[RMDB]
Structure probing data (2A3 and DMS) for a 177-nucleotide construct. Source: RMDB library OK2TST, as collected in RNAgym.
RNA sequence: GGGAACGACUCGAGUAGAGUCGAAAAAUCAAUAUCGACCGCACCUUGCCGCUUUCGGUCGAACGCCUGAUGACGCUGACGGGGCCGCUUCCCCGCAAGGAAAUUGAUGCGGCACUUGAAGCCGUCAACGAUACCAGCGAUUCGUCGCUGGUAUCGUAAAAGAAACAACAACAACAAC
Reactivity to 2A3 in 0.01 (KOAc 150mM, MgCl2 10mM, bicine 150mM(pH8.5), 24C), signal-to-noise 1, nucleotides 027 to 126: a000u100c090a060a050u050a070u100c020g000a000c020c010g050c040a080c030c040u110u160g030c000c030g060c130u070u040u100c020g030g000u050c020g000a030a060c030g070c020c030u190g080a120u120g010a000c030g000c020u010g010a010c020g000g030g040g020c060c000g010c000u070u000c030c010c040c020g090c030a020a000g020g000a040a130a120u190u090g020a030u090g000c000g010g000c020a010c010u000u030g000a020a010g030c020c000g010u020c000a010
Reactivity to DMS in 0.01 (KOAc 150mM, MgCl2 10mM, bicine 150mM(pH8.5), 24C), signal-to-noise 2, nucleotides 027 to 126: a130u010c150a020a130u000a120u010c030g000a010c020c020g020c300a080c040c030u000u000g020c050c090g000c160u010u020u020c020g010g000u000c020g000a030a090c230g010c050c050u010g010a190u000g020a040c070g000c030u000g000a300c130g000g000g020g030c050c020g000c050u000u000c010c140c000c050g020c230a030a090g000g000a050a030a100u020u010g010a060u010g020c010g020g020c040a070c030u010u010g020a150a010g020c030c030g040u000c070a010